An RNA of 177 nucleotides, treated with 2A3 and DMS and read out base by base. For 2A3, 1,136 sequencing reads were counted. Source: RMDB library OK2TRN, as collected in RNAgym. 2A3 adducts were read by reverse transcription with SuperScript II with manganese. Reactivities are given for positions 27 through 126.

RNA sequence: GGGAACGACUCGAGUAGAGUCGAAAAGAGGGUAUGACAAUUUCUUGGUCAGGAAAAAUCCAAAUGGUUCACGCAAAUUGGCAAUCGGCAAUUUAAUCCUUUCAACGAAUUUUGAAUCAUUGCGUGAGAACAGGCACUAAUUCGUUAGUGCCUGUUCAAAAGAAACAACAACAACAAC
Reactivity to 2A3 in 0.01 (KOAc 150mM, MgCl2 10mM, bicine 150mM(pH8.5), 24C), signal-to-noise 2, nucleotides 027 to 126: g070a060g050g020g020u120a090u050g010a010c010a030a110u060u120u130c040u090u080g130g000u020c010a000g050g070a060a080a000a000a040u020c010c010a000a040a140u110g080g020u050u040c030a010c000g000c020a010a080a100u070u020g010g000c020a040a120u090c040g100g000c010a010a030u010u010u190a130a060u010c010c030u070u140u050c030a020a000c060g100a130a080u150u170u070u180g040a040a030u140c020a050u040u070g010c010g010u000g010a010
Reactivity to DMS in 0.01 (KOAc 150mM, MgCl2 10mM, bicine 150mM(pH8.5), 24C), signal-to-noise 2, nucleotides 027 to 126: g010a040g000g000g000u000a040u000g000a060c030a020a050u010u010u000c080u010u010g020g020u000c040a050g000g000a020a070a040a130a070u000c010c020a070a100a090u020g020g010u010u010c000a030c060g010c030a010a020a090u000u010g010g020c090a070a070u000c080g000g000c110a040a100u000u020u000a070a070u000c020c030u000u010u000c080a060a110c120g010a080a080u000u030u000u000g010a050a060u010c070a060u000u000g000c020g010u000g010a060